[RMDB]
RNA sequence: GGGAACGACUCGAGUAGAGUCGAAAACCACCGCAAUUCGUUGCGGUGGGAAGGUGCAAUUCGCUGUCUGCACCACAGACGGCCAAUCCGUCAAAGCGAAUACUGGAGGGUCAUUCGUGACCCUCAAAGAAGUACCGUAAUUCGUUACGGUACUUCUAAAAGAAACAACAACAACAAC
Reactivity to 2A3 in 0.01 (KOAc 150mM, MgCl2 10mM, bicine 150mM(pH8.5), 24C), signal-to-noise 6, nucleotides 027 to 126: c000c000a000c000c000g010c010a010a050u070u070c220g060u110u020g000c010g010g000u010g000g000g010a050a100g020g000u020g010c020a070a150u080u030c010g000c030u030g060u120c050u060g000c010a010c020c010a010c010a020g010a000c010g000g040c060c100a040a070u100c010c010g020u020c030a030a030a000g010c010g020a030a030u100a190c140u170g120g010a010g010g010g000u000c010a020u050u100c150g070u030g000a010c000c000c000u000c000a000a010
Reactivity to DMS in 0.01 (KOAc 150mM, MgCl2 10mM, bicine 150mM(pH8.5), 24C), signal-to-noise 6, nucleotides 027 to 126: c010c000a010c000c000g000c000a010a040u000u000c180g020u000u010g000c000g010g000u000g010g000g000a040a050g000g010u000g010c030a070a120u000u000c030g020c000u010g010u010c050u000g010c010a050c020c040a080c090a160g010a000c000g010g000c180c280a120a140u010c010c010g000u000c020a050a300a060g000c020g010a080a080u010a100c220u000g000g000a010g010g010g010u000c000a050u000u010c170g000u000g000a010c000c000c000u000c000a010a040